[RMDB]
RNA sequence: GGGAACGACUCGAGUAGAGUCGAAAAAGAGAGCGCGAAAAAGAUCGAUCGAUCGUUUCAACGCGCAAGUUUAAGUUUGAUACGGGCAUACUAGCUAGCUAGCUAGCAAAACAAACUUAAUAAAGAACGCUAUACAUCAGUUCGCUGAUGUAUAGCGAAAAGAAACAACAACAACAAC
Reactivity to DMS in 0.01 (KOAc 150mM, MgCl2 10mM, bicine 150mM(pH8.5), 24C), signal-to-noise 2, nucleotides 027 to 126: a040g010a070g020a170g030c010g020c010g010a050a070a070a060a100g000a010u000c020g020a130u010c200g000a010u000c010g000u000u000u000c020a110a050c000g000c000g030c040a080a050g050u010u000u000a000a000g010u000u000u010g020a080u000a090c170g000g000g010c160a170u020a140c000u000a010g000c000u010a170g070c100u020a080g000c010u000a000g030c050a010a080a030a070c010a010a000a010c000u000u000a020a010u000a030a020a070g010a060a130
Reactivity to 2A3 in 0.01 (KOAc 150mM, MgCl2 10mM, bicine 150mM(pH8.5), 24C), signal-to-noise 2, nucleotides 027 to 126: a000g240a030g010a030g000c020g000c000g030a040a030a010a000a070g000a030u030c060g040a150u160c140g000a010u000c060g040u070u020u000c060a070a030c010g010c010g000c010a000a000g020u000u050u000a010a010g000u010u000u010g100a090u160a170c090g000g120g000c060a010u060a190c030u010a050g020c010u010a070g140c040u050a010g030c020u000a000g000c050a000a040a050a010c000a010a010a000c020u020u040a000a000u110a030a110a020g080a060a010